[RMDB]
RNA sequence: GGGAACGACUCGAGUAGAGUCGAAAAGGAUCUCUUUUGAGAUCCAGCUAGCUUUUGCUAGCGAUGUCCUCCGCACCCACCAGGAGGACUGAUUGAUUGAUUGAUGGAUAGCCGCCGGUACCAGGCUAUCCGGUGGGUGGUAUGAUAGGUGCCGGGAGCCAGUAUUAGGGUUCGCCCUAAUACUGGCAAAAGAAACAACAACAACAAC
Reactivity to 2A3 in 0.01 (KOAc 150mM, MgCl2 10mM, bicine 150mM(pH8.5), 24C), signal-to-noise 1, nucleotides 027 to 156: g020g010a020u020c020u010c030u120u140u260u300g000a010g000a010u030c000c000a010g000c000u000a000g000c000u060u050u140u300g000c010u000a000g010c000g000a000u000g000u010c000c000u000c000c000g000c040a040c000c000c000a000c000c010a020g000g000a020g010g010a000c000u000g000a000u160u040g010a010u070u030g110a010u050u090g050a120u300g010g000a000u000a000g000c000c020g030c070c000g030g000u010a010c020c020a040g040g050c000u000a000u000c000c000g000g000u000g010g010g040u000g050g000u130a110u120g130a130u080a080g010g000u010g020c080c080g000g020g000a020